[RMDB]
RNA sequence: GGGAACGACUCGAGUAGAGUCGAAAAGGUACCAAGUUAUAGAUUGUGACAGGUACACAGUCGGUGAGCGCUACUGCAGCGCAAGGUAGACCGGAACAUGGGCACCCGGUGAUGUAGUUUGCGUUGAAGAGUCAUUCGUGUUCGCACGAGUGACUCUAAAAGAAACAACAACAACAAC
Reactivity to DMS in 0.01 (KOAc 150mM, MgCl2 10mM, bicine 150mM(pH8.5), 24C), signal-to-noise 7, nucleotides 027 to 126: g010g000u010a080c010c000a090a120g010u010u000a100u020a100g000a080u010u000g020u000g010a070c040a110g010g010u030a060c030a050c060a030g010u010c020g000g020u020g000a070g000c010g000c010u000a040c090u020g010c080a020g010c010g010c020a020a000g000g000u000a070g020a060c020c040g000g000a080a070c160a070u050g010g000g000c020a080c040c000c230g000g010u010g010a060u010g000u000a030g000u000u010u010g020c080g010u000u000g010a120
Reactivity to 2A3 in 0.01 (KOAc 150mM, MgCl2 10mM, bicine 150mM(pH8.5), 24C), signal-to-noise 1, nucleotides 027 to 126: g030g000u010a010c000c000a020a010g000u010u000a120u030a100g130a090u030u010g000u000g000a000c020a050g040g000u050a020c070a000c000a000g020u040c000g000g120u090g060a060g010c020g000c000u020a000c010u050g000c010a070g000c000g020c010a000a000g010g000u030a000g050a110c030c000g040g000a050a000c050a140u140g020g000g000c000a010c000c000c000g010g000u000g000a010u010g010u000a000g010u010u020u090g000c000g030u000u060g040a040

Record summary:
Structure probing data (DMS and 2A3) for a 177-nucleotide construct. For 2A3, 2,034 sequencing reads were counted. High DMS reactivity at an A or C suggests that its Watson-Crick edge is free. It was measured as part of the RMDB library OK1LIB. For DMS the reverse transcriptase was MarathonRT.